[RMDB]
RNA sequence: GGGAACGACUCGAGUAGAGUCGAAAACAGAAGUUGGUAAUCGAUACCGACGACGGCUCGGUGCUUUUGGACGGGUACGCACCCCGAGAGCUGGCAGUGGCCGAAUGGACACGGCUUGGCCGAGGGGCAUUAUUUCGGCCUUCGGGCCGAAAUAAUGAAAAGAAACAACAACAACAAC
Reactivity to DMS in 0.01 (KOAc 150mM, MgCl2 10mM, bicine 150mM(pH8.5), 24C), signal-to-noise 3, nucleotides 027 to 126: c070a120g010a120a190g000u000u000g030g000u000a040a170u020c150g010a190u000a040c020c000g020a020c030g010a180c100g000g000c050u000c050g010g000u010g000c050u000u000u000u000g000g010a090c070g010g000g010u010a040c110g010c180a180c010c010c000c010g000a300g000a100g010c010u000g000g010c010a030g010u010g000g010c020c000g000a150a070u010g010g000a020c020a010c010g000g020c010u010u010g040g000c010c010g000a230g000g000g000g000
Reactivity to 2A3 in 0.01 (KOAc 150mM, MgCl2 10mM, bicine 150mM(pH8.5), 24C), signal-to-noise 1, nucleotides 027 to 126: c030a000g150a210a060g060u020u050g000g000u130a160a240u300c180g060a140u070a040c010c010g010a020c010g070a010c020g050g000c030u030c010g010g000u120g040c040u080u220u120u200g130g100a040c020g010g000g010u010a060c060g050c070a070c050c000c000c020g090a070g000a020g130c020u010g010g000c060a030g000u040g000g000c000c000g180a190a260u300g020g000a010c020a010c000g000g000c000u110u160g030g010c020c000g000a030g010g020g000g050